[RMDB]
RNA sequence: GGGAACGACUCGAGUAGAGUCGAAAACUUGUCCAGGUAGGAGCACAGGGUUUACUCUAGGCCCUGCAUGUGAAUGACUGACAUUCAAAGAACCGAUUAAUUUGGAAGAGAAGCGGCAGAACCGAGAAUCAUAUUAGGUUUUCGAACCUAAUAUGAUAAAAGAAACAACAACAACAAC
Reactivity to 2A3 in 0.01 (KOAc 150mM, MgCl2 10mM, bicine 150mM(pH8.5), 24C), signal-to-noise 8, nucleotides 027 to 126: c020u050u070g020u010c040c030a030g050g040u070a030g030g050a050g010c020a010c010a040g030g010g020u040u090u120a160c100u080c050u080a040g030g020c000c000c010u000g010c040a070u080g030u030g050a070a050u040g030a050c060u050g020a040c010a040u050u060c030a120a080a080g040a080a070c020c010g020a030u050u130a100a150u090u150u120g050g010a090a020g020a010g010a080a030g040c030g010g000c040a020g040a080a020c020c010g040a040g120a080
Reactivity to DMS in 0.01 (KOAc 150mM, MgCl2 10mM, bicine 150mM(pH8.5), 24C), signal-to-noise 9, nucleotides 027 to 126: c070u000u000g010u010c040c040a050g010g010u000a050g010g000a250g020c060a100c020a020g000g010g010u000u000u000a090c130u000c140u000a110g010g000c010c010c000u000g000c080a050u000g010u010g000a100a080u000g000a200c120u000g010a100c030a040u000u000c060a070a100a120g000a090a140c050c020g000a080u010u010a060a090u010u000u010g010g010a090a070g000a100g010a090a080g010c070g000g000c040a050g010a070a160c060c030g000a110g010a130